[RMDB]
RNA sequence: GGGAACGACUCGAGUAGAGUCGAAAAGAUAUGGAUGCACUACCCACCUUAGCAGAGCUCGAGGAUCUAUAUUAAAUCGGAAACGAUUUAAUAUAGGGAGAGCGAUCUAAGAGGUGCAUCCUAAGUCGUGAUGUAUGAGGUUCGCCUCAUACAUCACAAAAGAAACAACAACAACAAC
Reactivity to DMS in 0.01 (KOAc 150mM, MgCl2 10mM, bicine 150mM(pH8.5), 24C), signal-to-noise 1, nucleotides 027 to 126: g010a130u000a070u000g010g020a000u030g040c000a000c000u010a210c000c000c020a300c220c000u000u000a010g030c290a040g040a300g000c000u000c000g070a070g010g000a000u000c000u000a000u000a000u000u000a000a000a000u000c000g000g000a070a010a300c010g000a030u000u000u000a000a000u000a000u000a010g020g010g010a040g000a020g000c000g000a140u000c000u000a000a000g000a130g050g010u000g010c000a000u010c000c000u000a040a150g010u000c300
Reactivity to 2A3 in 0.01 (KOAc 150mM, MgCl2 10mM, bicine 150mM(pH8.5), 24C), signal-to-noise 2, nucleotides 027 to 126: g210a080u300a190u300g000g000a000u000g000c020a040c040u300a300c050c000c030a020c050c020u030u000a020g040c160a070g190a010g090c000u000c020g060a300g000g020a040u050c000u020a010u010a000u000u010a000a000a010u010c010g030g030a030a100a030c000g000a000u010u010u010a010a000u020a010u010a020g000g000g000a030g010a010g010c000g010a010u000c010u000a000a000g010a010g010g020u010g030c000a000u000c000c000u010a040a020g280u240c120